[RMDB]
RNA sequence: GGGAACGACUCGAGUAGAGUCGAAAAGAUAUGGAUUUCUAUAGAUCGAAGAACGGUUUCGGAAACGAAACCGGGAGAUCGAAAUAGAGAAUCCUAAGUCAAAGCAUAUUACGUUCGCGUAAUAUGCCACUGAGAAAGGGUUCGCCCUUUCUCAGUGAAAAGAAACAACAACAACAAC
Reactivity to 2A3 in 0.01 (KOAc 150mM, MgCl2 10mM, bicine 150mM(pH8.5), 24C), signal-to-noise 3, nucleotides 027 to 126: g020a010u080a050u220g000g000a000u000u090u000c030u020a110u060a100g160a230u050c000g110a170a020g000a080a000c000g000g000u000u030u000c020g010g000a020a060a050c010g000a010a000a000c000c020g000g000g000a040g020a000u050c010g010a020a070a010u080a000g100a010g140a050a050u030c000c000u030a120a040g070u050c080a160a040a050g010c010a000u010a010u020u020a000c020g060u020u120c300g000c020g210u000a000a010u010a010u010g000c010
Reactivity to DMS in 0.01 (KOAc 150mM, MgCl2 10mM, bicine 150mM(pH8.5), 24C), signal-to-noise 5, nucleotides 027 to 126: g000a030u000a300u000g000g010a010u000u000u000c000u010a030u000a170g030a200u000c000g000a030a070g000a300a300c000g000g010u000u010u000c000g010g000a140a140a190c010g010a000a000a000c000c000g000g000g000a110g000a010u000c000g020a020a040a080u000a000g010a080g010a020a010u000c000c000u010a060a210g000u010c030a080a110a150g010c000a000u000a000u000u000a000c000g010u010u010c300g020c010g010u000a010a020u000a010u000g000c000